Structure probing data (2A3) for a 207-nucleotide construct.
For 2A3 the reverse transcriptase was SuperScript II with manganese.
The data come from the RNA Mapping Database (RMDB), library M2RFPK.
For 2A3, 502 sequencing reads were counted.
[RMDB]
RNA sequence: GGGAACGACUCGAGUAGAGUCGAAAAAACUCAGCUAGGGAGAGUAUAACAUUCAUGUUGACGAGACCUAGACGAAACGCAGAGGAAAAUUAUUAAUCACUGGAUAGUAUUAGUAAUGACUCUGUGUAAAACUCUUCUACGUUCGCGUAGAAGAGAAGCUCUGAUGAUACUUCGGUAUCAUCAGAGCAAAAGAAACAACAACAACAAC
Reactivity to 2A3 in 0.01 (KOAc 150mM, MgCl2 10mM, bicine 150mM(pH8.5), 24C), signal-to-noise 1, nucleotides 027 to 156: a000a000c030u020c020a030g000c020u020a000g020g020g000a040g010a010g100u100a110u050a300a020c080a030u040u290c100a130u240g030u030u000g040a030c040g020a000g070a090c020c000u000a000g010a010c000g000a030a000a000c010g000c000a000g000a020g000g040a080a130a100a000u010u000a000u020u000a000a020u060c060a000c030u030g080g140a260u300a300g000u000a000u000u000a000g010u000a010a000u000g010a030c000u000c000u010g000u000g000u000a010a010a010a010c000u000c000u010u000c010u000a000c010g020u010u030c210g020c000g010u000a020g000a000a000g030a000g000a000a050